[RMDB]
RNA sequence: GGGAACGACUCGAGUAGAGUCGAAAAACGCCAGUUACGACUGGCGAAUCAGAAACUCCUCACACACUAAUUUCUGAUAAUCAGGCACCCUUAUCUCUAAAUUAGGGUGUUUUUUAUUGACAUAAAAUACUUUAGGUGACUUCGGUCACCUAAAGUAAAAAGAAACAACAACAACAAC
Reactivity to 2A3 in 0.01 (KOAc 150mM, MgCl2 10mM, bicine 150mM(pH8.5), 24C), signal-to-noise 2, nucleotides 027 to 126: a000c000g000c000c000a000g010u050u060a160c280g000a030c100u000g000g000c000g000a000a020u030c000a000g110a050a040a050c060u090c050c020u200c030a060c040a040c010a010c090u120a120a160u030u040u000c030u010g000a020u030a190a070u100c050a030g000g000c000a000c020c030c010u100u040a100u030c210u020c030u300a060a200a070u020u000a050g000g010g000u010g000u040u020u000u000u000u000a040u030u040g020a000c000a010u100a090a100a040a060
Reactivity to DMS in 0.01 (KOAc 150mM, MgCl2 10mM, bicine 150mM(pH8.5), 24C), signal-to-noise 1, nucleotides 027 to 126: a080c000g010c000c000a000g000u030u050a070c300g000a110c000u000g000g000c000g010a010a070u040c060a080g000a000a080a080c100u020c000c010u060c110a160c250a110c170a200c020u000a140a170u020u000u000c000u000g000a010u000a000a020u010c230a090g010g000c000a000c010c000c000u060u020a000u000c060u070c050u060a060a110a080u000u000a000g000g000g030u000g000u000u000u000u000u000u000a050u000u030g000a120c170a000u000a030a050a060a090

Structure probing data (2A3 and DMS) for a 177-nucleotide construct. The 2A3 profile rests on 788 reads. Values cover nucleotides 27 to 126.